[RMDB]
RNA sequence: GGGAACGACUCGAGUAGAGUCGAAAAUUCAGAAGGCUAUGGUUUUCUGAUUUUUUUAUGCUCAGUAGUGAUAUGCAAAAAAGACAAAGUUGACAUCAGUUAACUUUUACCUUUAUUCUACUUUCCCAACCUAACUAUGAUUCGUCAUAGUUAGGUUAAAAGAAACAACAACAACAAC
Reactivity to 2A3 in 0.01 (KOAc 150mM, MgCl2 10mM, bicine 150mM(pH8.5), 24C), signal-to-noise 9, nucleotides 027 to 126: u040u010c000a000g000a010a000g020g000c030u080a080u300g160g010u000u000u000u000c000u000g010a010u010u000u000u000u000u010u080a140u120g040c030u030c120a020g000u030a010g010u040g110a070u100a060u300g100c090a060a070a030a020a020a010g030a030c060a020a020a000g000u010u010g010a010c020a110u220c140a190g010u000u020a000a000c000u020u010u020u090a080c000c010u030u040u020a050u100u020c000u010a020c000u010u020u000c000c000c000
Reactivity to DMS in 0.01 (KOAc 150mM, MgCl2 10mM, bicine 150mM(pH8.5), 24C), signal-to-noise 9, nucleotides 027 to 126: u000u000c010a010g000a020a010g000g000c010u010a100u030g030g010u000u000u000u000c000u000g000a000u000u000u000u010u010u020u020a070u030g010c120u010c120a040g010u000a020g010u020g010a100u020a070u010g020c150a000a040a080a040a020a020g010a080c180a020a010a010g000u000u000g000a000c000a160u030c240a120g010u000u000a010a010c000u000u000u000u010a090c180c010u000u000u000a050u020u000c020u000a020c020u000u000u000c000c000c010